[RMDB]
RNA sequence: GGGAACGACUCGAGUAGAGUCGAAAAGACGGCAGUUCUGAACUAUAAGGACAACGAACAGAUCCCAAGUUGUCCUUAUAACUGGACUGAGUACAGUUAGUUGUAUAGCAUACUCUUGGGAUCUGUUGUAUGCUAUAUAGUUCGAACUGUACUGUCACGCCAGGUGAUUAUUCGUAAUCACCUGGCGAAAAGAAACAACAACAACAAC
Reactivity to 2A3 in 0.01 (KOAc 150mM, MgCl2 10mM, bicine 150mM(pH8.5), 24C), signal-to-noise 1, nucleotides 027 to 156: g000a000c000g000g000c000a000g000u020u000c030u250g000a000a000c000u000a000u010a070a140g110g070a190c030a040a050c160g130a010a000c000a010g000a000u010c000c000c010a000a000g110u150u030g030u070c060c000u000u000a000u000a000a000c000u060g080g000a000c000u000g030a020g280u280a190c050a010g020u000u020a030g000u020u040g030u010a050u210a130g010c060a010u060a180c030u030c000u040u000g000g000g020a010u000c000u000g000u000u000g000u000a080u080g030c000u030a020u000a000u000a260g000u000u000c000g000a000a000c000u000g010u020a060c010u090g000u000c000a020
An RNA of 207 nucleotides, treated with 2A3 and read out base by base. 2A3 adducts were read by reverse transcription with SuperScript II with manganese. For 2A3, 704 sequencing reads were counted.